This 177-nucleotide RNA was probed chemically with 2A3 and DMS.
The data come from the RNA Mapping Database (RMDB), library OK1LIB.

RNA sequence: GGGAACGACUCGAGUAGAGUCGAAAAAUGUGGUUAAUCGAUGGAGACAAAACGAAACAUACAAAACGAUGGCAGUACCUUUAGGUGUAAGAGGUAAAGAUGAUAUUUUAUCAUUGAACUUACAUGAGCGGUAGGAACUAUUCGUAGUUCCUACCGCAAAAGAAACAACAACAACAAC
Reactivity to 2A3 in 0.01 (KOAc 150mM, MgCl2 10mM, bicine 150mM(pH8.5), 24C), signal-to-noise 2, nucleotides 027 to 126: a000u180g050u140g000g210u200u110a070a070u020c080g010a070u190g180g000a090g000a080c070a050a120a030a050c060g000a050a000a060c070a080u180a020c010a130a080a000a000c000g040a050u160g040g000c000a000g020u010a000c040c000u010u050u060a090g000g120u000g020u020a030a010g000a050g270g150u180a110a030a150g020a020u050g000a020u090a120u030u300u180u170a020u000c010a000u010u010g020a020a000c040u040u030a000c010a020u120g000a030
Reactivity to DMS in 0.01 (KOAc 150mM, MgCl2 10mM, bicine 150mM(pH8.5), 24C), signal-to-noise 1, nucleotides 027 to 126: a090u000g000u000g000g000u000u000a010a130u010c100g000a090u000g010g030a030g000a050c040a050a090a100a120c020g000a030a010a040c240a080u030a000c190a000a120a160a010c190g010a030u020g000g000c040a040g000u000a080c030c110u000u010u020a030g020g000u000g000u000a070a010g000a030g010g010u030a090a020a070g060a000u010g000a000u000a030u000u040u010u100a000u000c000a010u000u000g000a010a160c030u000u000a050c030a000u030g040a160
DMS (dimethyl sulfate) methylates the pairing face of unpaired adenines and cytosines. For 2A3, 832 sequencing reads were counted. For 2A3 the reverse transcriptase was SuperScript II with manganese.